Notes
An RNA of 177 nucleotides, treated with 2A3 and DMS and read out base by base. The reactions ran in a buffer of 150 mM KOAc, 10 mM MgCl2 and 150 mM bicine (pH 8.5), at 24 C. For 2A3, 3,642 sequencing reads were counted. DMS adducts were read by reverse transcription with MarathonRT.

RNA sequence: GGGAACGACUCGAGUAGAGUCGAAAAUUGUGUGGGAGGCUGGCAAGUCCAAACCACCACUCAAUCGUAAUUAUGUUUUUACUGGUUAUCAUAUAACCAAAAAUAGUAAAGUGCAGCUCGGUGAGUAGUAUCCUAUAGUCUUCGGACUAUAGGAUACAAAAGAAACAACAACAACAAC
Reactivity to 2A3 in 0.01 (KOAc 150mM, MgCl2 10mM, bicine 150mM(pH8.5), 24C), signal-to-noise 4, nucleotides 027 to 126: u030u020g020u010g000u040g010g050g020a170g020g030c040u010g000g020c140a210a040g030u040c000c010a040a020a030c010c000a000c000c010a000c000u040c000a010a030u030c040g070u060a070a060u120u140a130u120g060u060u030u010u010u040a080c040u040g010g020u010u020a020u060c090a010u060a020u090a300a030c010c060a050a010a000a070a090u150a010g010u030a030a030a030g030u050g040c010a010g010c020u030c040g120g000u060g020a010g010u090a030
Reactivity to DMS in 0.01 (KOAc 150mM, MgCl2 10mM, bicine 150mM(pH8.5), 24C), signal-to-noise 4, nucleotides 027 to 126: u000u010g000u000g010u000g010g010g010a120g060g000c190u000g010g010c040a130a140g020u000c010c010a020a090a140c010c000a210c000c010a010c000u010c010a000a000u000c090g020u020a070a100u000u000a030u000g000u000u000u000u000u000a060c100u000g020g010u000u000a020u000c150a120u010a300u000a030a050c010c000a010a030a020a080a060u000a060g020u000a020a020a100g010u010g010c030a060g010c070u010c030g040g020u010g000a070g000u010a120